This 177-nucleotide RNA was probed chemically with 2A3 and DMS.
For DMS the reverse transcriptase was MarathonRT.
Values are in units of 0.01, from 0 to 300, in steps of 10.
Reactivities are given for positions 27 through 126.
It was measured as part of the RMDB library OK2TST.
The DMS profile rests on 1,356 reads.
[RMDB]
RNA sequence: GGGAACGACUCGAGUAGAGUCGAAAAAAGCGAAUCGUAGCGGCAAUGGAAAAGAAGCUCAAUUCCAAGAUUGUUUACAAAACCGAAAUUGACAAGAGCUUGAUUUCGGGUAUCCGAAUUGAAUCGAUCUACACAAGUUCUUCGGAACUUGUGUAGAAAAAGAAACAACAACAACAAC
Reactivity to 2A3 in 0.01 (KOAc 150mM, MgCl2 10mM, bicine 150mM(pH8.5), 24C), signal-to-noise 1, nucleotides 027 to 126: a010a000g080c060g030a060a020u050c020g020u050a010g060c000g060g000c000a020a100u080g080g010a070a030a020a030g040a080a000g000c020u010c040a000a130u020u000c010c000a030a020g050a070u000u140g060u040u130u050a090c050a040a190a050a040c000c020g010a000a010a030u000u050g030a010c100a260a230g040a020g300c070u030u060g030a050u010u030u010c000g030g000g060u010a000u000c010c030g030a060a130u000u080g070a030a030u010c020g020a060
Reactivity to DMS in 0.01 (KOAc 150mM, MgCl2 10mM, bicine 150mM(pH8.5), 24C), signal-to-noise 2, nucleotides 027 to 126: a080a100g000c040g010a070a030u000c080g010u000a060g030c060g000g040c070a060a070u010g010g000a060a020a060a140g010a070a090g020c070u000c010a070a150u000u000c010c030a100a100g010a140u000u000g020u000u000u020a130c230a080a060a060a140c010c000g010a000a020a020u000u000g000a030c040a130a110g020a140g030c120u010u000g020a030u000u000u010c000g010g000g010u000a040u020c050c100g020a030a070u010u010g000a040a120u000c040g000a080